Structure probing data (2A3) for a 177-nucleotide construct.
High 2A3 reactivity points to a flexible backbone, as in loops and unpaired stretches.
The 2A3 profile rests on 770 reads.
RNA sequence: GGGAACGACUCGAGUAGAGUCGAAAAACACAAGCAUAUUUAAGAGUUAAAUGCUUCACUAAACAAUAAGCCAGUGCAGCCAACUGGCCGAGUGAAGCCAAUGGGGCAGUGCACUGCGAAAAACAAACCGCAUGAUCCUAUUCGUAGGAUCAUGCGGAAAAGAAACAACAACAACAAC
Reactivity to 2A3 in 0.01 (KOAc 150mM, MgCl2 10mM, bicine 150mM(pH8.5), 24C), signal-to-noise 2, nucleotides 027 to 126: a000c070a000c020a050a000g050c070a120u030a160u120u190u150a230a030g050a000g120u080u190a000a020a000u040g020c000u030u000c000a060c030u170a150a300a100c060a080a170u080a210a000g050c010c040a000g030u020g030c000a000g000c000c010a080a010c070u010g000g000c000c000g050a080g050u300g090a120a010g020c000c030a050a040u240g200g000g000g000c050a050g050u060g060c090a040c030u000g000c050g030a000a020a020a020a020c070a000a000a070